[RMDB]
RNA sequence: GGGAACGACUCGAGUAGAGUCGAAAAAACGGGACCCAUGGUGGAGGCACGAUAAGAUCUUCAGCAGUCUUUCGAGGGUCAUGACCUUGAAUCAUGACUGAUGCUGGCCCACCGAUGAUGAUGAUGGAAGCUGCGUUGAACGUGCAGAAGAUGGCUACCUCAUUUUAAUGUUCGCAUUAAAAUGAGGAAAAGAAACAACAACAACAAC
Reactivity to DMS in 0.01 (KOAc 150mM, MgCl2 10mM, bicine 150mM(pH8.5), 24C), signal-to-noise 5, nucleotides 027 to 156: a080a060c070g020g010g010a220c020c020c020a080u000g010g010u000g030g020a210g010g020c050a100c040g010a130u000a060a090g000a070u010c050u000u010c040a080g010c050a110g020u000c020u010u000u000c040g010a190g010g000g010u000c110a050u000g000a050c020c030u000u010g010a080a070u000c020a040u000g000a070c010u000g000a090u010g020c030u000g020g000c090c020c030a050c050c040g020a070u000g020a100u010g010a070u000g010a080u010g000g010a090a240g010c010u010g020c020g010u000u000g010a040a090c090g020u000g020c030a150g000a020a070g010a070u000g010g010c020u000a160
Reactivity to 2A3 in 0.01 (KOAc 150mM, MgCl2 10mM, bicine 150mM(pH8.5), 24C), signal-to-noise 5, nucleotides 027 to 156: a010a000c090g030g020g040a040c020c010c020a060u090g030g000u000g010g040a040g000g040c050a010c040g020a010u070a090a050g030a050u040c040u110u060c090a040g040c040a030g040u010c030u020u060u050c030g030a080g060g000g040u030c030a030u050g070a070c030c040u070u110g080a070a020u040c030a040u100g020a030c000u030g030a060u080g020c010u020g010g050c010c030c010a030c010c030g000a000u020g000a010u020g000a010u010g000a010u040g010g030a080a050g030c030u050g000c030g060u050u060g030a100a010c020g020u020g020c020a010g010a030a020g030a030u050g020g000c030u060a090

Structure probing data (DMS and 2A3) for a 207-nucleotide construct. The data come from the RNA Mapping Database (RMDB), library OK3TST. For DMS, 17,700 sequencing reads were counted. Conditions: 150 mM KOAc, 10 mM MgCl2 and 150 mM bicine (pH 8.5), 24 C.